RNA sequence: GGGAACGACUCGAGUAGAGUCGAAAAAUCGAGCCGCGCUACAGCAUCGAGCCGCCGGAUAUCAAGUUGCCCGAGGUCAAGCUGUACACGCGCUAUGUCGAUCCGGUAAGCAACGACAUGCUGAACAAGGUCAUGCUAGUUUCGACUAGCAUGACCUAAAAGAAACAACAACAACAAC
Reactivity to 2A3 in 0.01 (KOAc 150mM, MgCl2 10mM, bicine 150mM(pH8.5), 24C), signal-to-noise 2, nucleotides 027 to 126: a000u040c030g030a030g160c060c040g000c010g000c000u010a010c000a020g030c010a060u110c090g030a050g060c000c000g040c030c000g000g020a040u040a070u200c200a150a040g080u170u080g070c000c010c030g010a000g040g000u020c040a050a050g000c000u010g010u000a000c070a010c020g010c010g040c030u050a090u160g120u040c000g000a020u000c000c000g000g040u080a070a020g030c030a070a040c030g060a000c050a060u050g000c050u010g010a040a020c060a080
Reactivity to DMS in 0.01 (KOAc 150mM, MgCl2 10mM, bicine 150mM(pH8.5), 24C), signal-to-noise 2, nucleotides 027 to 126: a120u000c050g070a130g000c070c050g000c070g020c300u020a060c020a020g020c070a100u010c120g010a240g010c000c010g060c220c020g010g000a000u020a040u000c150a150a150g010u020u000g050c010c010c030g030a300g020g040u000c070a030a140g000c010u000g000u000a070c030a090c100g010c130g000c060u000a020u030g000u000c000g000a050u000c010c020g000g020u000a060a100g000c020a080a090c110g010a130c150a040u000g000c090u000g000a090a140c090a090
Structure probing data (2A3 and DMS) for a 177-nucleotide construct. The DMS profile rests on 858 reads. 2A3 adducts were read by reverse transcription with SuperScript II with manganese. Source: RMDB library OK2TST, as collected in RNAgym. For DMS the reverse transcriptase was MarathonRT.